The record gives the reactivity of an RNA of 177 nucleotides to DMS. Conditions: 150 mM KOAc, 10 mM MgCl2 and 150 mM bicine (pH 8.5), 24 C. For DMS the reverse transcriptase was MarathonRT.
[RMDB]
RNA sequence: GGGAACGACUCGAGUAGAGUCGAAAAGAUAUGGAGCUGACCCAGAGACGAAGAGCAAUGAUGAUAUUCUGAGCUCGGAAACGAGCUCAGAAUAUUUGAGCUUGAACACUCUGCAGCUCCUAAGUCACAGAAAGGAUCAGUUCGCUGAUCCUUUCUGAAAAGAAACAACAACAACAAC
Reactivity to DMS in 0.01 (KOAc 150mM, MgCl2 10mM, bicine 150mM(pH8.5), 24C), signal-to-noise 1, nucleotides 027 to 126: g020a040u020a300u020g020g000a030g000c000u000g020a300c280c300c090a030g010a010g000a240c110g030a300a300g000a030g010c000a130a120u030g000a130u010g000a000u000a010u000u000c000u030g000a040g000c020u000c000g010g020a080a090a180c040g050a000g020c000u000c000a040g000a020a000u000a000u020u010u000g000a060g000c010u000u000g010a050a250c300a140c060u010c010u020g030c000a000g060c000u000c000c000u000a040a060g000u020c050a300
Source: RMDB library TTRINS, as collected in RNAgym.